[RMDB]
RNA sequence: GGGAACGACUCGAGUAGAGUCGAAAAAGCUGCACGAAAUCGGCGGAAAGGACCCCGCUAUCGGGAGGGGCUAGCAGCGAGGGUUGCCGCUCCAGCCGCGCUAUGAAGCAGACAUAGCAGAUUUACAAUCCGCAUAAAUCUUCGGAUUUAUGCGGAUAAAAGAAACAACAACAACAAC
Reactivity to DMS in 0.01 (KOAc 150mM, MgCl2 10mM, bicine 150mM(pH8.5), 24C), signal-to-noise 1, nucleotides 027 to 126: a040g010c020u000g000c010a220c260g010a060a060a000u000c060g010g020c020g000g000a060a190a160g000g000a060c030c010c000c030g010c020u020a040u010c150g010g020g000a130g010g010g000g040c070u010a060g020c150a030g000c030g000a130g010g000g000u000u000g000c050c070g020c150u000c020c030a090g000c020c050g000c210g030c000u000a000u000g010a180a130g030c090a070g010a150c010a020u010a020g000c020a150g000a060u000u020u000a090c250a120
Chemical mapping of a 177-nucleotide RNA with DMS. The DMS profile rests on 811 reads. The reactions ran in a buffer of 150 mM KOAc, 10 mM MgCl2 and 150 mM bicine (pH 8.5), at 24 C.